[RMDB]
RNA sequence: GGGAACGACUCGAGUAGAGUCGAAAACGCAGGGAAGGACGCCGUCAAUCGGGCGAAGCAGGCUAUGAGCAAGGGGAAGGAAGUGAGUUCGGAGCUCAUCCGCCAGAUGCUUUUGGCCCACGACAAGGUACGGAGUUAGGUUCGCCUAACUCCGUACAAAAGAAACAACAACAACAAC
Reactivity to DMS in 0.01 (KOAc 150mM, MgCl2 10mM, bicine 150mM(pH8.5), 24C), signal-to-noise 1, nucleotides 027 to 126: c130g050c000a080g010g020g020a020a060g040g000a110c110g030c000c050g010u000c110a170a100u000c120g020g030g070c080g000a070a050g000c010a090g000g040c040u020a030u000g040a040g010c050a030a070g000g040g000g000a090a070g000g000a110a110g000u000g000a070g040u000u020c180g000g000a300g000c000u000c000a050u010c070c070g040c000c000a080g000a120u000g020c040u000u020u000u000g000g000c000c020c020a040c110g000a040c170a180a070g010
Chemical mapping of a 177-nucleotide RNA with DMS.
For DMS, 558 sequencing reads were counted.
The RNA was probed in 150 mM KOAc, 10 mM MgCl2 and 150 mM bicine (pH 8.5) at 24 C.
Values cover nucleotides 27 to 126.